An RNA of 177 nucleotides, treated with DMS and 2A3 and read out base by base. Source: RMDB library OK2TRN, as collected in RNAgym. For 2A3 the reverse transcriptase was SuperScript II with manganese. The 2A3 profile rests on 3,016 reads. Conditions: 150 mM KOAc, 10 mM MgCl2 and 150 mM bicine (pH 8.5), 24 C.
[RMDB]
RNA sequence: GGGAACGACUCGAGUAGAGUCGAAAAUUGACGGUGGGGUGGUCUUUACUCCAAUGAGCAUCGAACCACAGCGAAGUGGGUUCAUCGCAAAGAUGCAUUAGUCACGGAGCCACGUCGACAUGGCUAAGCAGUGCUAUUAUUUCGAUAAUAGCACUGCAAAAGAAACAACAACAACAAC
Reactivity to DMS in 0.01 (KOAc 150mM, MgCl2 10mM, bicine 150mM(pH8.5), 24C), signal-to-noise 4, nucleotides 027 to 126: u020u010g010a050c030g020g020u010g040g000g000g030u000g000g010u000c070u000u000u000a070c070u000c020c210a070a110u010g000a070g020c000a010u000c050g000a080a060c000c020a020c030a140g010c120g020a190a100g010u000g000g000g000u000u000c040a070u010c100g010c140a100a080a130g000a040u000g000c120a120u010u020a060g020u000c030a040c080g010g000a230g000c030c030a050c050g010u010c040g000a070c100a070u000g000g000c040u000a060a140
Reactivity to 2A3 in 0.01 (KOAc 150mM, MgCl2 10mM, bicine 150mM(pH8.5), 24C), signal-to-noise 2, nucleotides 027 to 126: u040u050g020a000c020g030g080u100g040g050g020g000u010g000g000u040c000u060u060u040a030c010u020c010c050a060a120u190g030a010g030c010a000u020c040g010a020a010c010c010a020c000a050g120c060g080a150a020g030u050g010g060g020u030u030c030a050u030c010g030c130a200a080a050g020a020u020g000c030a050u050u110a030g080u020c010a010c030g020g000a010g010c000c020a050c060g050u030c020g010a060c040a070u100g060g000c020u010a060a030